[RMDB]
RNA sequence: GGGAACGACUCGAGUAGAGUCGAAAAGAUAUGGACGGACUAGGACAUGAUCCAGGCUCGGAAACGAGCCGAUCAACAGCCUACUCCGUCCUAAGUCAAAAGUAACUCCUCUUCGGAGGAGUUACAACAGACAGGGAUAGUUCGCUAUCCCUGUCUGAAAAGAAACAACAACAACAAC
Reactivity to 2A3 in 0.01 (KOAc 150mM, MgCl2 10mM, bicine 150mM(pH8.5), 24C), signal-to-noise 1, nucleotides 027 to 126: g020a010u020a020u070g000g000a000c020g020g000a000c030u010a010g020g040a060c060a300u180g000a010u020c080c210a140g010g020c000u000c010g000g030a040a040a020c010g000a000g000c010c000g000a000u000c000a010a130c070a090g050c000c000u010a010c010u000c010c040g000u020c000c010u010a000a000g000u000c000a030a060a000a060g000u000a000a000c010u000c000c000u020c000u090u160c300g100g010a000g020g000a000g000u000u000a000c000a000a000
Reactivity to DMS in 0.01 (KOAc 150mM, MgCl2 10mM, bicine 150mM(pH8.5), 24C), signal-to-noise 2, nucleotides 027 to 126: g010a020u000a190u010g000g020a030c030g000g000a000c090u000a010g020g020a100c120a160u000g010a020u010c050c140a280g040g000c000u000c000g020g000a050a020a130c000g000a000g000c010c000g000a000u000c010a030a090c300a140g000c000c000u000a000c240u000c000c030g010u000c000c000u000a000a080g010u020c020a110a100a050a130g010u000a010a020c010u000c000c000u000c010u000u020c220g040g000a000g000g000a010g010u010u000a010c000a080a160
Source information: Chemical mapping of a 177-nucleotide RNA with 2A3 and DMS. Reactivities are rounded to 0.1 and cut off at 0 and 3. For 2A3 the reverse transcriptase was SuperScript II with manganese. The RNA was probed in 150 mM KOAc, 10 mM MgCl2 and 150 mM bicine (pH 8.5) at 24 C. It was measured as part of the RMDB library TTRDES. Values cover nucleotides 27 to 126.